[RMDB]
RNA sequence: GGGAACGACUCGAGUAGAGUCGAAAAUGUUACCGCCCACGCAUUCCCGCGCGCGCCCAUUCGGCACGCCCUCCUCCUCGACCCGCGCCAAAUGAAAGACCCCGCGCAGCUCGCACCGCGCGGGGUCGUAUAAUACCUAGUUCGCUAGGUAUUAUACAAAAGAAACAACAACAACAAC
Reactivity to DMS in 0.01 (KOAc 150mM, MgCl2 10mM, bicine 150mM(pH8.5), 24C), signal-to-noise 3, nucleotides 027 to 126: u000g010u010u000a130c050c080g000c020c010c030a080c110g030c050a120u000u000c020c000c020g010c100g000c040g030c050g000c010c010c080a160u010u010c100g000g020c010a040c080g000c030c030c010u000c020c010u010c020c020u000c040g000a070c020c010c020g010c060g000c050c050a070a070a090u000g010a080a110a160g010a030c000c000c000c000g010c000g020c010a030g000c030u000c190g010c210a160c110c050g000c000g040c000g000g000g000g010u010c000